About this RNA:
Conditions: 150 mM KOAc, 10 mM MgCl2 and 150 mM bicine (pH 8.5), 24 C. An RNA of 170 nucleotides, treated with 2A3 and DMS and read out base by base. For DMS the reverse transcriptase was MarathonRT. The 2A3 profile rests on 30,257 reads.

RNA sequence: GGGAACGACUCGAGUAGAGUCGAAAACUCCCCGCUCCUGGAGAAGGGAGACUCGGGAACGCCUAGCAUCUGAGGGACAAAGCCGCCCCCGGGCGCUCCCCUCGGAGGUCCACUGGGUGGGUUCACAAAAGCUUUUGGUUCGCCAAAAGCAAAAGAAACAACAACAACAAC
Reactivity to 2A3 in 0.01 (KOAc 150mM, MgCl2 10mM, bicine 150mM(pH8.5), 24C), signal-to-noise 9, nucleotides 027 to 129: c030u040c010c010c000c000g020c000u040c010c010u120g110g100a160g040a120a080g060g050g000a000g010a010c080u060c110g020g010g010a030a030c020g030c010c020u030a020g050c020a120u000c020u010g020a020g010g000g010a020c050a060a090a010g050c130c040g020c010c030c000c020c050g060g010g000c020g010c010u010c000c000c000c000u000c000g010g000a010g000g060u080c060c030a040c030u020g010g000g020u060g020g090g010u040u050c080a070c020a090a070a010a010
Reactivity to DMS in 0.01 (KOAc 150mM, MgCl2 10mM, bicine 150mM(pH8.5), 24C), signal-to-noise 7, nucleotides 027 to 129: c110u020c020c000c020c040g030c000u000c000c000u070g050g020a150g000a160a110g000g000g000a060g020a080c080u040c040g000g030g030a090a040c080g010c060c010u030a070g020c080a090u020c020u000g030a040g000g020g040a050c010a100a070a060g000c100c100g050c010c040c020c110c250g010g000g010c030g020c040u010c060c020c020c020u030c030g030g020a020g000g000u000c080c170a120c070u020g000g010g010u020g010g040g050u080u030c070a130c110a070a090a090a110